Source: RMDB library OK3TST, as collected in RNAgym.
Structure probing data (2A3) for a 207-nucleotide construct.
[RMDB]
RNA sequence: GGGAACGACUCGAGUAGAGUCGAAAACAGGUAUUCAAUAAAUGUCAUCUCCUUUAUCCCGUUAGCAUUUGGGUGAGAUGCAUAACUCAUAGUAUCAUCGUUGCUGAUUCAGAAAGAGAUAACAAGAGAAAGUGUAUGACUUGCCUGGGAUGAGGCACCUAGGUUACGCUUUCGAGCGUAACCUAGGAAAAGAAACAACAACAACAAC
Reactivity to 2A3 in 0.01 (KOAc 150mM, MgCl2 10mM, bicine 150mM(pH8.5), 24C), signal-to-noise 2, nucleotides 027 to 156: c040a030g100g010u060a100u140u140c140a080a120u190a230a070a080u120g020u130c050a050u030c050u060c000c000u060u160u190a090u030c040c020c020g100u070u150a070g050c070a100u040u040u150g080g010g000u080g030a010g000a000u000g060c000a000u050a070a000c000u040c020a060u100a120g070u040a060u120c010a040u090c070g030u020u110g040c060u040g070a230u040u100c020a000g120a120a100a000g040a000g050a000u120a100a040c010a080a030g070a000g000a100a000a070g000u030g040u040a000u060g100a070c020u030u040g020c000c050u020g010g000g030a050u020g040a050g000g030c020a050